Notes: An RNA of 177 nucleotides, treated with 2A3 and read out base by base. For 2A3 the reverse transcriptase was SuperScript II with manganese.
[RMDB]
RNA sequence: GGGAACGACUCGAGUAGAGUCGAAAAGCGCGGGUCGUAGACCUUCUUGACACCCACCUCGCCAUCGACCUUGAGCACUCCGUCGUAGUUGGUGAACAUGUGACCGGCGAUCGGGCGGGUGAACGCGGGACCGCGGAGUAUUCGUACUCCGCGGUCCAAAAGAAACAACAACAACAAC
Reactivity to 2A3 in 0.01 (KOAc 150mM, MgCl2 10mM, bicine 150mM(pH8.5), 24C), signal-to-noise 2, nucleotides 027 to 126: g120c000g000c010g020g010g000u080c000g020u030a020g100a120c000c000u070u090c080u030u080g000a010c000a050c000c020c000a000c000c000u050c000g040c040c000a030u040c020g090a260c070c000u080u080g100a020g030c020a000c050u060c030c040g040u050c070g100u110a160g130u110u130g000g000u060g010a080a000c060a060u120g060u050g090a100c050c000g040g030c000g010a060u190c110g040g000g000c090g000g000g020u000g000a030a000c070g000c060g030